[RMDB]
RNA sequence: GGGAACGACUCGAGUAGAGUCGAAAAAGCUGACGGUACGCCGUCAGCAGAUGUGAAGCAGUGAUGAGAAACUGGAUCUGACUGGCUGUGCUGAGUUUGUUCAAUCCAACCCUGAGCUUCACGUUAAUCUAGGAGGGUCUUUCGAGACCCUCCUAGAAAAAGAAACAACAACAACAAC
Reactivity to DMS in 0.01 (KOAc 150mM, MgCl2 10mM, bicine 150mM(pH8.5), 24C), signal-to-noise 2, nucleotides 027 to 126: a120g000c000u000g000a000c000g000g000u000a090c300g020c010c000g000u000c000a000g140c010a020g060a000u040g010u000g000a010a000g030c040a140g030u030g010a100u020g000a100g020a040a110a210c140u000g010g000a000u010c110u000g010a050c000u000g000g010c020u000g000u020g030c170u030g050a010g000u000u000u010g000u010u000c030a020a050u030c030c000a000a100c060c010c030u000g000a120g000c000u000u030c000a010c000g030u020u020a080a060
Reactivity to 2A3 in 0.01 (KOAc 150mM, MgCl2 10mM, bicine 150mM(pH8.5), 24C), signal-to-noise 3, nucleotides 027 to 126: a030g000c000u000g000a010c000g000g000u030a030c300g040c000c000g020u000c000a000g000c010a000g000a040u170g010u000g000a000a000g010c000a040g050u070g200a180u110g000a160g130a100a080a070c090u070g010g020a010u020c070u070g000a000c000u000g020g010c020u070g040u280g170c030u190g030a000g010u000u060u030g080u070u050c000a000a000u030c000c010a030a100c000c000c030u030g070a010g080c000u040u030c000a000c000g000u000u110a090a070